[RMDB]
RNA sequence: GGGAACGACUCGAGUAGAGUCGAAAAGAUAUGGAAUUUCGUAUGGAGGCCGUAUUGUCAGCUCGAGGGAUCGGAAACGAUCCCGAGAGCUUGGAUUUAUACGGUGAAGUACGAAAUUCCUAAGUCACAGUCCUUAUUACUUCGGUAAUAAGGACUGAAAAGAAACAACAACAACAAC
Reactivity to DMS in 0.01 (KOAc 150mM, MgCl2 10mM, bicine 150mM(pH8.5), 24C), signal-to-noise 2, nucleotides 027 to 126: g000a020u000a300u000g000g000a000a000u000u000u010c000g020u010a000u010g020g010a300g000g010c000c000g020u000a000u000u000g000u020c000a010g000c020u010c010g010a300g000g000g000a000u000c000g040g000a120a140a210c000g010a000u000c000c010c020g010a260g000a020g030c000u000u000g000g000a040u010u040u010a010u010a000c010g000g010u000g000a210a230g000u020a010c010g010a000a030a010u000u000c010c010u000a010a030g010u000c070a270
Conditions: 150 mM KOAc, 10 mM MgCl2 and 150 mM bicine (pH 8.5), 24 C.
This 177-nucleotide RNA was probed chemically with DMS.
DMS adducts were read by reverse transcription with MarathonRT.
Values cover nucleotides 27 to 126.